[RMDB]
RNA sequence: GGGAACGACUCGAGUAGAGUCGAAAAGAUAUGGAUAUUAGGGAUGCGCACCCUUGGACCUCGGAAACGAGCUAGGGUGCGAACUACAUCUCUAAUAUCCUAAGUCAAACCCAACUUCGGUUGGGAAGGCAUGUGUAUUGUUCGCAAUACACAUGCCAAAAGAAACAACAACAACAAC
Reactivity to 2A3 in 0.01 (KOAc 150mM, MgCl2 10mM, bicine 150mM(pH8.5), 24C), signal-to-noise 1, nucleotides 027 to 126: g020a020u060a050u140g000g000a000u000a000u000u000a020g040g000g000a010u010g000c030g030c000a010c010c000c010u020u070g120g120a170c030c000u000c010g020g050a100a110a060c000g020a000g000c040u010a010g000g030g000u000g000c000g000a000a000c000u060a000c010a010u000c000u000c000u000a010a000u010a000u010c000c000u020a010a000g000u000c010a120a100a210c020c010c020a010a010c040u090u080c230g090g020u000u010g020g000g010a060a050
Reactivity to DMS in 0.01 (KOAc 150mM, MgCl2 10mM, bicine 150mM(pH8.5), 24C), signal-to-noise 1, nucleotides 027 to 126: g010a010u000a300u000g000g000a040u000a010u000u000a010g000g000g020a010u010g000c070g000c010a000c000c000c030u000u000g040g010a140c300c020u000c010g000g000a090a100a110c000g010a010g020c030u040a000g000g000g010u000g000c000g000a010a010c090u010a300c010a000u000c000u000c000u000a000a000u000a000u000c000c000u000a000a080g010u000c010a070a090a110c000c020c020a040a040c020u000u040c070g000g010u000u010g000g000g000a040a060
Annotation:
An RNA of 177 nucleotides, treated with 2A3 and DMS and read out base by base. It was measured as part of the RMDB library TTRDEL. For 2A3 the reverse transcriptase was SuperScript II with manganese. The RNA was probed in 150 mM KOAc, 10 mM MgCl2 and 150 mM bicine (pH 8.5) at 24 C.